[RMDB]
RNA sequence: GGGAACGACUCGAGUAGAGUCGAAAAGACGAUCACACUAAUAUCAGGAAGGCUUUCUGUUGUGAUUACAGGACAUCCAGGAGGUUUAAGGGGAAAGUACGUAGACGGCCAGACGUACUCAAAGGAAGACGCGUAAAUAUUUCGAUAUUUACGCGUCAAAAGAAACAACAACAACAAC
Reactivity to DMS in 0.01 (KOAc 150mM, MgCl2 10mM, bicine 150mM(pH8.5), 24C), signal-to-noise 4, nucleotides 027 to 126: g010a110c090g000a030u020c070a050c020a090c150u030a070a080u030a050u010c050a030g010g000a080a090g000g000c050u010u000u000c060u000g020u020u020g010u020g020a080u020u020a080c120a060g010g000a060c090a080u000c070c010a100g010g010a140g000g000u000u030u030a060a090g020g030g000g030a090a060a030g010u010a010c030g000u010a040g020a110c090g000g010c050c020a070g000a020c040g020u000a010c020u000c100a040a050a090g010g010a080a150
Reactivity to 2A3 in 0.01 (KOAc 150mM, MgCl2 10mM, bicine 150mM(pH8.5), 24C), signal-to-noise 3, nucleotides 027 to 126: g040a010c080g030a040u050c030a020c000a000c050u130a040a120u100a060u190c030a030g030g040a050a030g100g030c000u020u070u030c010u060g060u050u020g050u080g020a040u020u060a040c000a060g060g020a000c000a070u040c000c000a020g030g060a020g030g060u110u090u200a080a020g040g000g000g000a130a100a000g020u000a000c000g040u010a030g080a190c030g020g010c000c000a020g000a030c000g000u030a020c010u010c090a070a100a010g050g010a130a030

Conditions: 150 mM KOAc, 10 mM MgCl2 and 150 mM bicine (pH 8.5), 24 C. This 177-nucleotide RNA was probed chemically with DMS and 2A3. The DMS profile rests on 7,798 reads. 2A3 adducts were read by reverse transcription with SuperScript II with manganese. High 2A3 reactivity points to a flexible backbone, as in loops and unpaired stretches.